[RMDB]
RNA sequence: GGGAACGACUCGAGUAGAGUCGAAAAUUUAACGCUGUUUUAUUGGCGCAAAGGUUUACUGAUAAACAACUAAUAAUUAAACCUUUUGUGUGCGAAACGUGGUUGUUUAACGUACUCUUUAAUCGCUUUGGGGAUGUGUCCUUCGGGACACAUCCAAACCAAUUCCAGAGUUCGCUCUGGAAUUGGUAAAAGAAACAACAACAACAAC
Reactivity to 2A3 in 0.01 (KOAc 150mM, MgCl2 10mM, bicine 150mM(pH8.5), 24C), signal-to-noise 1, nucleotides 027 to 156: u120u130u030a040a000c000g040c020u000g090u150u010u000u080a050u080u180g030g000c000g000c000a000a000a030g040g030u030u040u000a030c030u070g090a120u100a260a220a130c120a030a020c090u170a070a110u120a110a030u140u030a000a030a010c030c000u120u060u100u160g000u030g030u030g050c040g010a060a040a110c030g010u040g010g010u020u080g000u000u020u050a060a000c000g020u010a030c030u000c130u070u060u090a060a120u040c050g080c220u270u300u210g240g020g000g000a000u000g000u000g000u000c000c010u000u000c170g000g000g000a000c000a000c000a000u000c000c000a000a000
The record gives the reactivity of an RNA of 207 nucleotides to 2A3. The reactions ran in a buffer of 150 mM KOAc, 10 mM MgCl2 and 150 mM bicine (pH 8.5), at 24 C.